[RMDB]
RNA sequence: GGGAACGACUCGAGUAGAGUCGAAAAGAUGAUCGAUCUCCUUGCAGAUAAAUUAAACAUGGAUCCCGCAAGGUUAAGACUAAUAAAUGCAAGUGAUGGGCCCUUCAGGUCACCGCUUGGGCUUGAGAUCAGGCGACUGAUUCGUCAGUCGCCUGAUAAAAGAAACAACAACAACAAC
Reactivity to 2A3 in 0.01 (KOAc 150mM, MgCl2 10mM, bicine 150mM(pH8.5), 24C), signal-to-noise 1, nucleotides 027 to 126: g210a060u110g070a030u180c140g000a040u110c000u000c000c000u000u000g000c000a000g000a120u260a050a130a210u170u190a160a090a050c210a140u300g280g000a040u060c100c070c000g030c000a190a000g040g000u000u160a010a000g000a000c050u110a060a080u070a140a000a020u140g090c040a000a000g000u250g020a250u120g000g000g020c000c000c000u090u180c050a000g040g040u070c100a070c250c000g100c060u000u000g000g000g000c040u020u030g090a040g000

The record gives the reactivity of an RNA of 177 nucleotides to 2A3. The 2A3 profile rests on 323 reads. Values cover nucleotides 27 to 126. It was measured as part of the RMDB library OK1LIB. 2A3 adducts were read by reverse transcription with SuperScript II with manganese.